About this RNA: Structure probing data (DMS and 2A3) for a 177-nucleotide construct. Reactivities are given for positions 27 through 126. Reactivities are rounded to 0.1 and cut off at 0 and 3. For DMS, 6,484 sequencing reads were counted.

RNA sequence: GGGAACGACUCGAGUAGAGUCGAAAAGAUAUGGAACGCGAAGAACACCGUCGACGUUGAUCUCGGAAACGAGGGAGUCGUGGUGGGAGCGUUCCUAAGUCAAAACCACAGCGUUCGCGCUGUGGAACCCACUAACAUACUUCGGUAUGUUAGUGGGAAAAGAAACAACAACAACAAC
Reactivity to DMS in 0.01 (KOAc 150mM, MgCl2 10mM, bicine 150mM(pH8.5), 24C), signal-to-noise 5, nucleotides 027 to 126: g000a020u000a300u010g010g000a020a010c010g010c000g000a140a160g000a170a200c010a000c000c010g010u000c010g010a010c010g000u020u030g000a020u010c000u000c000g000g000a090a060a200c000g010a010g000g000g000a010g010u000c000g030u000g000g010u000g000g000g000a090g010c000g000u000u000c000c000u000a000a060g010u000c030a060a060a100a210c010c000a010c000a000g000c000g010u000u010c190g020c010g010c000u000g010u000g000g010a010a050
Reactivity to 2A3 in 0.01 (KOAc 150mM, MgCl2 10mM, bicine 150mM(pH8.5), 24C), signal-to-noise 6, nucleotides 027 to 126: g030a020u070a050u150g000g010a000a000c000g030c020g170a300a090g030a090a020c010a000c010c020g290u260c030g030a010c010g180u300u040g010a010u000c010u000c000g020g040a070a060a060c020g000a000g010g000g010a020g000u010c010g010u020g000g010u010g020g000g020a020g000c000g000u000u010c000c000u000a020a000g030u000c040a000a030a070a160c000c000a000c000a000g000c000g060u100u140c260g030c000g000c100u010g000u000g000g000a000a010